[RMDB]
RNA sequence: GGGAACGACUCGAGUAGAGUCGAAAAACGCGGAGUACGCUCCGCGACAACACUUCUUUCUACCCGCUAACCGAGACCUAUGGGUCGUUAAAUUACGUCUCUAUCUUACUCACAUAACAUCGCACAAAAAACGUGGUUCGGUUCGCCGAACCACGAAGAUCGAUCUGUACUUCGGUACAGAUCGAUCAAAAGAAACAACAACAACAAC
Reactivity to 2A3 in 0.01 (KOAc 150mM, MgCl2 10mM, bicine 150mM(pH8.5), 24C), signal-to-noise 1, nucleotides 027 to 156: a000c010g000c010g000g030a000g080u110a030c160g120c020u000c000c000g010c020g030a020c030a050a000c010a010c010u080u010c060u040u160u000c010u030a060c000c000c000g010c100u050a140a060c020c110g030a060g030a070c020c020u070a190u200g060g050g000u000c000g040u160u070a030a280a020u130u110a020c010g060u000c040u000c000u060a040u000c030u150u090a090c010u180c030a080c010a200u080a160a010c020a210u170c070g110c080a020c090a070a120a000a030a000a000c080g000u000g010g010u000u020c010g000g060u020u090c120g000c010c000g010a000a050c000c000a000c000g000a000a000